[RMDB]
RNA sequence: GGGAACGACUCGAGUAGAGUCGAAAACGAUAGGUUGCUGCGUCUGCUUUCCGAUAAACCGCACCAUGUCGGGGUCGCUCAUCGGGGUCGCGGGAUCGUAGCGCUUGACCGAUUCCGAAACCAGACACCAUUUAGCCAGUUUCGACUGGCUAAAUGGAAAAGAAACAACAACAACAAC
Reactivity to 2A3 in 0.01 (KOAc 150mM, MgCl2 10mM, bicine 150mM(pH8.5), 24C), signal-to-noise 1, nucleotides 027 to 126: c000g030a060u030a050g000g010u080u280g060c000u020g030c030g060u000c030u000g000c020u070u090u010c000c050g000a020u040a060a110a010c030c010g040c000a030c050c040a090u180g090u120c090g000g010g030g010u090c020g030c050u070c030a020u020c000g000g060g020g010u040c080g030c050g020g000g000a040u090c000g000u020a020g000c000g020c010u080u130g000a050c000c040g050a050u080u050c020c010g030a070a000a060c000c010a000g020a020c070a020
Reactivity to DMS in 0.01 (KOAc 150mM, MgCl2 10mM, bicine 150mM(pH8.5), 24C), signal-to-noise 2, nucleotides 027 to 126: c130g030a070u000a050g010g010u010u010g070c010u010g000c030g000u010c010u000g010c060u010u020u000c050c040g010a040u000a040a110a130c180c060g020c130a080c050c040a070u010g000u000c030g030g000g010g000u000c120g040c060u030c240a060u000c010g020g010g000g010u020c130g000c020g000g000g000a030u000c030g000u000a090g000c050g000c090u010u010g010a050c090c010g000a200u000u000c040c010g010a060a140a120c030c010a140g010a080c210a160

Chemical mapping of a 177-nucleotide RNA with 2A3 and DMS. The reactions ran in a buffer of 150 mM KOAc, 10 mM MgCl2 and 150 mM bicine (pH 8.5), at 24 C. 2A3 adducts were read by reverse transcription with SuperScript II with manganese. Reactivities are given for positions 27 through 126.